[RMDB]
RNA sequence: GGGAACGACUCGAGUAGAGUCGAAAACUGCGAUUCUCCUAUGACGCCUAGUCAGGGAUUUCGCUUGAUGAUGGCCCCCCGUCGACAUUCCAAGUCGGGGCUGGACGGCUAGGUGACGUUCUGAUGGCGGGGCUUCAUUAUUCGUAAUGAAGCCCCGAAAAGAAACAACAACAACAAC
Reactivity to 2A3 in 0.01 (KOAc 150mM, MgCl2 10mM, bicine 150mM(pH8.5), 24C), signal-to-noise 2, nucleotides 027 to 126: c030u000g020c000g030a050u080u000c120u060c260c000u300a300u300g000a000c040g000c020c120u060a000g040u050c020a030g000g000g090a020u000u050u010c010g000c040u040u130g100a120u020g000a030u040g060g000c000c000c000c020c020c050g100u030c020g060a070c050a130u190u150c060c000a100a000g040u000c000g000g000g060g000c000u000g040g050a020c000g040g020c000u020a020g020g000u000g040a050c020g000u040u000c020u090g120a170u090g010g080
Source: RMDB library RFM100, as collected in RNAgym.
An RNA of 177 nucleotides, treated with 2A3 and read out base by base.
The RNA was probed in 150 mM KOAc, 10 mM MgCl2 and 150 mM bicine (pH 8.5) at 24 C.